[RMDB]
RNA sequence: GGGAACGACUCGAGUAGAGUCGAAAAUAGUGGCCCCAGCCUGCCCGGCAGACCCGAGAUGAAAAGCUCUCCUCCUGCGAAGCCCCUCUUCGGAGCACUGUGCAGCUAGGCCCCUUGGAGGGCGGCAAAUUAACAUAUCGUUCGCGAUAUGUUAAUUAAAAGAAACAACAACAACAAC
Reactivity to 2A3 in 0.01 (KOAc 150mM, MgCl2 10mM, bicine 150mM(pH8.5), 24C), signal-to-noise 9, nucleotides 027 to 126: u140a000g090u060g050g030c000c000c000c000a010g030c000c000u030g010c000c020c000g030g010c020a020g030a090c000c010c020g020a030g010a050u160g060a040a080a030a030g020c010u000c000u010c010c010u030c000c010u040g020c020g040a050a030g020c010c000c010c000u030c020u040u030c040g030g010a020g010c020a030c130u050g050u110g040c020a030g010c020u060a040g060g050c010c000c000c000u020u040g060g020a070g030g010g000c000g000g010c020a030
Reactivity to DMS in 0.01 (KOAc 150mM, MgCl2 10mM, bicine 150mM(pH8.5), 24C), signal-to-noise 9, nucleotides 027 to 126: u030a090g020u010g000g010c020c020c020c060a110g010c030c030u010g000c040c020c020g000g010c060a070g000a100c050c020c030g010a080g000a100u020g010a070a070a100a130g000c040u000c020u000c020c020u010c050c020u000g010c050g000a100a120g000c060c010c020c020u010c030u010u010c080g010g000a070g010c050a070c050u010g010u010g010c060a070g010c040u010a110g010g010c010c010c010c020u010u010g000g000a080g000g000g020c040g010g000c060a060